[RMDB]
RNA sequence: GGGAACGACUCGAGUAGAGUCGAAAAGAAGGCCCUGUAGCGAUCCAUGCAGAAGCAGUGGAUGCACAAGGUAACGUUGAUGUUGCAGAUGCAGAUAUCACCGUGACUGUAGAUACCUUGCCUGCAACAGGUAGCACUAGUUCGCUAGUGCUACCUGAAAAGAAACAACAACAACAAC
Reactivity to DMS in 0.01 (KOAc 150mM, MgCl2 10mM, bicine 150mM(pH8.5), 24C), signal-to-noise 3, nucleotides 027 to 126: g030a150a190g000g000c040c010c030u010g030u010a080g040c030g010a030u000c010c010a050u010g010c020a160g010a090a160g010c000a070g050u010g020g010a020u010g010c020a060c040a030a030g000g000u010a050a090c080g010u010u010g010a070u000g000u000u000g010c000a060g020a140u020g020c010a040g010a050u000a010u000c010a070c070c070g000u000g000a150c160u020g000u000a140g010a030u000a010c010c010u000u000g030c020c000u000g000c020a060a060
Reactivity to 2A3 in 0.01 (KOAc 150mM, MgCl2 10mM, bicine 150mM(pH8.5), 24C), signal-to-noise 3, nucleotides 027 to 126: g100a040a030g070g000c010c000c030u000g030u030a080g010c070g120a020u000c010c000a010u030g010c000a030g070a300a040g040c030a020g150u020g060g000a010u010g000c020a010c000a000a010g040g000u110a170a040c060g040u020u110g050a060u060g000u000u020g000c010a010g030a200u170g020c010a000g000a080u030a000u030c020a030c040c030g120u100g130a060c130u120g020u060a090g020a020u030a030c010c010u030u110g000c020c010u000g010c020a020a030

Structure probing data (DMS and 2A3) for a 177-nucleotide construct. DMS (dimethyl sulfate) methylates the pairing face of unpaired adenines and cytosines. Values cover nucleotides 27 to 126. The reactions ran in a buffer of 150 mM KOAc, 10 mM MgCl2 and 150 mM bicine (pH 8.5), at 24 C.